[RMDB]
RNA sequence: GGGAACGACUCGAGUAGAGUCGAAAAGAUAUGGAUGGGAAGAUCAACAGCGUAGGGCUCGGAAACGAGCCUACGACAUGAUCGCCAUCCUAAGUCAAAGCUUCUCUUCGUUCGCGAAGAGAAGCAAGCACUAAAGAAGGUUCGCCUUCUUUAGUGCAAAAGAAACAACAACAACAAC
Reactivity to DMS in 0.01 (KOAc 150mM, MgCl2 10mM, bicine 150mM(pH8.5), 24C), signal-to-noise 6, nucleotides 027 to 126: g010a040u000a130u010g000g000a020u000g000g010g010a100a090g010a010u000c000a120a230c210a200g000c010g010u010a020g010g020g030c000u000c000g010g010a020a030a050c000g010a010g010c000c000u000a000c000g000a060c090a130u000g000a010u000c000g000c010c000a010u000c000c010u010a010a080g000u000c000a150a140a160g000c000u000u000c000u000c000u000u000c010g010u000u010c300g020c010g010a010a010g000a010g000a000a000g010c000a010a040
Reactivity to 2A3 in 0.01 (KOAc 150mM, MgCl2 10mM, bicine 150mM(pH8.5), 24C), signal-to-noise 6, nucleotides 027 to 126: g020a000u040a010u080g000g010a020u030g020g070g160a300a300g020a290u040c040a090a300c130a300g060c000g020u030a050g110g300g120c010u000c020g000g000a000a020a010c000g000a000g010c000c000u000a000c000g030a020c020a190u210g000a000u010c010g000c030c000a000u000c000c000u000a030a000g000u010c040a210a020a060g000c000u000u000c000u000c000u000u000c010g050u020u080c300g020c010g180a010a000g010a000g000a000a000g010c000a000a000